[RMDB]
RNA sequence: GGGAACGACUCGAGUAGAGUCGAAAAUUGGCGAAUGCCUGUGGAUCUACAUUUGUUGCGGGUUCGAGACCCGUCAGAGCCCGGCUCUGUAGCUCAAUGGUAGAGCAGUGUAUUCACAUAAACUUGUAAAAGACACGUGCCUUCGGGCACGUGUCAAGAUGAAGUUAAUGUUCGCAUUAACUUCAUCAAAAGAAACAACAACAACAAC
Reactivity to 2A3 in 0.01 (KOAc 150mM, MgCl2 10mM, bicine 150mM(pH8.5), 24C), signal-to-noise 6, nucleotides 027 to 156: u080u040g010g010c030g080a240a060u250g010c000c010u010g010u010g020g000a040u010c030u080a020c010a040u040u040u110g060u040u020g020c000g000g010g000u000u030c030g000a010g020a060c000c010c000g020u000c000a000g000a000g010c090c300c140g080g000c010u010c000u010g040u030a000g020c000u000c030a030a070u190g240g050u150a020g000a000g000c000a000g000u020g010u060a020u010u020c010a000c010a030u140a040a090a060c060u090u100g090u150a050a100a010a040g010a000c000a000c000g000u010g000c020c000u040u070c210g030g000g000c010a000c000g000u000g000u000c000a000a000
Reactivity to DMS in 0.01 (KOAc 150mM, MgCl2 10mM, bicine 150mM(pH8.5), 24C), signal-to-noise 3, nucleotides 027 to 156: u000u020g020g000c030g020a080a070u010g000c010c020u000g030u000g020g020a090u000c010u000a020c000a080u000u000u000g030u000u000g020c000g010g020g000u000u010c040g020a300g000a070c010c020c010g020u000c050a070g000a090g000c020c070c100g060g000c050u000c020u010g040u010a070g030c050u000c040a050a070u010g020g030u000a050g010a110g050c010a140g030u000g010u000a040u000u010c010a030c040a130u040a090a090a120c070u010u030g010u010a060a130a110a190g010a030c000a010c010g000u000g000c000c000u000u000c300g020g030g000c000a000c010g000u000g020u000c000a000a030